[RMDB]
RNA sequence: GGGAACGACUCGAGUAGAGUCGAAAAAGAAGUUUGGCCGUACUGCCGAUCAUCCGGCGCAUCAGAAUGCGCUAGCUAACAUUCUGUAUGGCGGCGAGUUUGGGCGUAAGAAUCUAGGGAAUACGCAGCCUGGGGACGGCUGGAAAUUCCGUGGCCGCUCAUCCAACAGUUUCGACUGUUGGAUGAGAAAAGAAACAACAACAACAAC
Reactivity to 2A3 in 0.01 (KOAc 150mM, MgCl2 10mM, bicine 150mM(pH8.5), 24C), signal-to-noise 1, nucleotides 027 to 156: a000g100a110a000g010u070u090u010g020g000c010c020g030u060a030c040u100g000c000c000g030a060u080c050a030u130c130c000g000g070c060g020c010a000u020c010a020g050a040a000u020g000c000g020c170u070a080g040c040u040a010a010c000a020u040u000c000u000g080u190a050u040g070g000c000g040g050c030g010a080g020u010u040u040g080g000g000c010g000u030a070a070g060a110a020u110c110u080a100g030g030g170a000a000u030a010c140g020c050a010g010c010c020u120g000g010g020g090a040c060g000g010c000u030g000g040a090a040a000u020u000c020c000g040u050g000g030c040c050g020
Source: RMDB library OK3TST, as collected in RNAgym. This 207-nucleotide RNA was probed chemically with 2A3. The 2A3 profile rests on 577 reads.